RNA sequence: GGGAACGACUCGAGUAGAGUCGAAAACAGGUCGCUGUGUACCAGGCGGCAUUGGCGGUGGCGGGUGUAGAGCCCGAAACUAUCGGUGUGGUGGAGGCGCACGGCACCGGCACACCAAUCGGUGACAGUAAUGGUCCAUCUUCGGAUGGACCAUUACAAAAGAAACAACAACAACAAC
Reactivity to 2A3 in 0.01 (KOAc 150mM, MgCl2 10mM, bicine 150mM(pH8.5), 24C), signal-to-noise 1, nucleotides 027 to 126: c050a010g030g020u030c040g020c010u050g050u060g020u120a050c030c030a050g060g000c020g000g000c030a090u010u100g120g000c170g050g000u010g040g050c030g000g070g000u010g020u010a120g010a020g050c000c000c000g000a040a000a010c040u060a040u150c120g180g000u070g020u070g080g220u050g030g060a080g070g010c080g000c030a040c060g070g000c000a010c000c000g060g000c000a020c000a010c040c030a020a120u070c100g010g000u030g050a050c030a050
Reactivity to DMS in 0.01 (KOAc 150mM, MgCl2 10mM, bicine 150mM(pH8.5), 24C), signal-to-noise 2, nucleotides 027 to 126: c100a090g020g010u010c050g020c000u010g060u010g000u000a050c010c060a270g000g010c030g000g050c020a060u000u000g020g030c050g030g000u010g000g020c020g000g000g030u000g000u010a170g020a260g030c000c000c010g000a100a070a030c090u010a020u010c080g000g000u000g030u000g020g000u030g010g000a240g000g000c050g000c100a050c080g010g010c030a050c020c000g000g050c010a040c030a070c020c000a110a080u000c210g010g010u010g000a080c120a120
Chemical mapping of a 177-nucleotide RNA with 2A3 and DMS. For 2A3 the reverse transcriptase was SuperScript II with manganese. It was measured as part of the RMDB library OK2TST. Values cover nucleotides 27 to 126. For DMS, 1,358 sequencing reads were counted. For DMS the reverse transcriptase was MarathonRT. The reactions ran in a buffer of 150 mM KOAc, 10 mM MgCl2 and 150 mM bicine (pH 8.5), at 24 C.